[RMDB]
RNA sequence: GGGAACGACUCGAGUAGAGUCGAAAAGAUAUGGACCUACUGACCGCUACUAGGUCGUUGAAAUCGGAAACGAUGGAGACCAUAGCGGGAUGUAGGUCCUAAGUCAAAACCUCAGUUCGCUGAGGAACGUGUCUCUAAGGUUCGCCUUAGAGACACGAAAAGAAACAACAACAACAAC
Reactivity to 2A3 in 0.01 (KOAc 150mM, MgCl2 10mM, bicine 150mM(pH8.5), 24C), signal-to-noise 1, nucleotides 027 to 126: g070a000u050a050u150g010g000a000c000c020u000a000c020u060g190a050c020c000g020c000u020a040c050u160a210g010g010u000c000g000u110u000g020a020a030a000u010c010g000g040a030a080a040c010g000a030u020g010g040a030g030a040c000c000a000u000a010g020c000g010g000g010a010u040g000u010a000g000g000u010c000c000u000a000a000g000u000c000a010a020a030a080c000c000u020c000a000g000u040u100c250g000c160u010g020a000g000g000a020a050
Reactivity to DMS in 0.01 (KOAc 150mM, MgCl2 10mM, bicine 150mM(pH8.5), 24C), signal-to-noise 2, nucleotides 027 to 126: g030a000u000a300u000g010g010a020c000c000u020a000c010u000g000a300c010c030g010c000u000a020c300u010a100g000g030u000c000g010u010u000g000a070a170a010u020c000g010g010a150a100a140c020g010a000u000g000g000a060g000a020c010c000a300u000a010g000c000g000g000g000a080u000g010u000a010g000g010u000c000c000u030a010a040g030u000c010a090a130a040a150c000c000u000c000a000g000u010u000c150g030c000u000g000a010g010g000a030a030